[RMDB]
The record gives the reactivity of an RNA of 207 nucleotides to DMS and 2A3. The DMS profile rests on 3,410 reads. The data come from the RNA Mapping Database (RMDB), library RNAMAK. The reactions ran in a buffer of 150 mM KOAc, 10 mM MgCl2 and 150 mM bicine (pH 8.5), at 24 C.
RNA sequence: GGGAACGACUCGAGUAGAGUCGAAAAAGAGAGUUCGCUCUCUCGGUGCACCUUUGUGUCAGGCGGAUAGUAGGGAGGCUGACAAUCCCAUUGGGAUUGUCCAGCCGAAGAACUACUAUGCCAUGACACUCUGGUAUAUGGCGGGGUUCGCCCCGAAGUGUUACCGUUAUUUCGAUAACGGUAACACAAAAGAAACAACAACAACAAC
Reactivity to DMS in 0.01 (KOAc 150mM, MgCl2 10mM, bicine 150mM(pH8.5), 24C), signal-to-noise 1, nucleotides 027 to 156: a040g000a060g010a030g010u000u020c300g030c040u000c000u000c000u000c000g020g060u010g000c110a100c000c020u000u010u000g010u000g000u010c010a060g030g000c100g010g030a050u000a000g020u000a020g010g000g010a260g020g020c030u010g030a030c010a030a010u010c010c000c000a300u000u010g030g020g020a030u000u000g020u000c000c020a020g000c000c000g020a040a100g030a130a250c000u000a030c000u000a010u010g010c000c000a110u010g000a050c010a000c010u000c060u000g000g010u010a100u000a070u010g010g090c030g000g010g010g040u000u000c060g060c000c000c000c010g000a000a300
Reactivity to 2A3 in 0.01 (KOAc 150mM, MgCl2 10mM, bicine 150mM(pH8.5), 24C), signal-to-noise 4, nucleotides 027 to 156: a010g050a000g010a020g020u140u240c160g090c120u020c020u000c010u000c080g070g050u140g040c090a020c020c000u000u000u030g000u000g000u000c010a010g040g000c030g070g240a050u030a040g000u000a000g000g020g000a030g020g000c000u000g000a000c000a010a000u010c040c000c080a150u220u300g020g000g000a000u010u000g000u000c090c070a000g000c000c000g010a030a000g010a000a000c000u000a000c000u000a000u030g030c000c020a100u020g000a000c000a000c000u010c000u000g000g070u020a040u040a050u210g230g000c020g000g000g000g000u070u130c150g140c010c000c010c010g000a150a050